[RMDB]
RNA sequence: GGGAACGACUCGAGUAGAGUCGAAAAGAUAUGGAGUGGGAGGGAGAAGGUGGUCGGAAACGACCAUUCUUCUUUGAUCUCCUCACUCCUAAGUCAAAACGAAGUGUAGGUUCGCCUACACUUCGAACUCAAAGUAUUCGUUCGCGAAUACUUUGAGAAAAGAAACAACAACAACAAC
Reactivity to DMS in 0.01 (KOAc 150mM, MgCl2 10mM, bicine 150mM(pH8.5), 24C), signal-to-noise 2, nucleotides 027 to 126: g010a010u000a010u010g010g010a020g070u010g000g000g010a030g010g000g010a000g040a010a010g000g010u000g000g010u000c010g010g000a010a000a020c000g010a020c000c000a010u000u020c010u000u000c000u000u000u000g000a050u010c000u000c000c000u010c000a000c000u000c000c000u000a000a060g010u010c010a130a090a130a300c030g010a020a000g010u000g010u000a000g010g020u000u020c300g010c010c000u000a000c000a010c000u020u000c000g000a080a120
Reactivity to 2A3 in 0.01 (KOAc 150mM, MgCl2 10mM, bicine 150mM(pH8.5), 24C), signal-to-noise 2, nucleotides 027 to 126: g000a000u030a010u080g010g000a010g010u010g000g020g010a010g000g010g000a020g000a010a010g000g000u000g000g000u000c000g010g020a020a000a010c000g000a000c000c000a020u300u130c010u000u000c000u190u110u010g000a000u000c000u000c000c000u020c010a000c000u000c000c000u000a010a010g000u000c000a030a100a000a110c010g000a000a000g000u000g010u000a010g040g080u060u090c300g160c060c000u000a000c000a000c000u010u000c000g000a010a000